[RMDB]
RNA sequence: GGGAACGACUCGAGUAGAGUCGAAAAUUAAAACCUAUUUGGCUCCUGUAGCUCCAGGUAAGGUUGAAGUGACUAUAUGCUGGUCCAUUGCAUGGUCCCUGUUGAUAUCGUAAUGGAAGGGGCACAGGGUUGCAUGAGGGUUCGCCCUCAUGCAACCAAAAGAAACAACAACAACAAC
Reactivity to DMS in 0.01 (KOAc 150mM, MgCl2 10mM, bicine 150mM(pH8.5), 24C), signal-to-noise 1, nucleotides 027 to 126: u000u000a130a050a090a070c050c010u010a080u000u000u000g070g020c070u010c040c000u000g020u000a090g040c100u000c050c050a100g010g010u010a050a180g010g020u010u000g000a100a090g000u010g000a080c050u010a070u020a090u000g010c010u000g000g000u020c040c040a050u000u000g020c060a100u000g010g010u000c010c050c080u010g000u000u010g010a110u010a100u000c160g020u010a010a050u000g000g010a070a140g010g000g020g030c010a030c130a070g000
Conditions: 150 mM KOAc, 10 mM MgCl2 and 150 mM bicine (pH 8.5), 24 C. Chemical mapping of a 177-nucleotide RNA with DMS. For DMS the reverse transcriptase was MarathonRT. The data come from the RNA Mapping Database (RMDB), library OK2TRN.